[RMDB]
RNA sequence: GGGAACGACUCGAGUAGAGUCGAAAAGCAGCGCGUCUUUGUAGAGCGGACGAAAGCUCUGGCUUCGGGCCCGCUCUCAAGGGUAGCAGACGAUCGAGUCAGGGUCGACUCGAGAGCUGGGCCAUACGCGGGUAUGUAGCUUCGGCUGCGUACCCGCAAAAGAAACAACAACAACAAC
Reactivity to DMS in 0.01 (KOAc 150mM, MgCl2 10mM, bicine 150mM(pH8.5), 24C), signal-to-noise 5, nucleotides 027 to 126: g020c020a040g010c030g030c020g000u010c020u000u000u000g010u050a010g000a020g020c010g020g000a060c010g020a030a020a060g000c010u010c210u060g020g020c020u000u000c010g000g010g010c120c000c000g000c000u000c000u000c010a010a030g000g010g000u010a100g020c040a080g010a100c140g010a130u000c010g010a030g000u010c030a160g010g010g010u020c120g000a030c010u000c000g010a020g010a110g020c010u000g010g000g000c010c030a090u020a070c170
Reactivity to 2A3 in 0.01 (KOAc 150mM, MgCl2 10mM, bicine 150mM(pH8.5), 24C), signal-to-noise 7, nucleotides 027 to 126: g080c030a010g010c010g000c000g040u020c010u030u050u030g090u250a010g010a000g010c000g000g010a010c010g060a110a080a000g010c020u050c130u180g200g010c000u020u010c020g080g010g030c000c000c000g000c000u000c000u000c000a000a010g020g020g010u150a040g020c010a000g020a040c030g020a030u020c000g000a000g030u000c020a040g140g030g160u160c090g010a000c000u000c000g010a000g000a000g000c000u020g000g020g010c000c010a040u070a090c090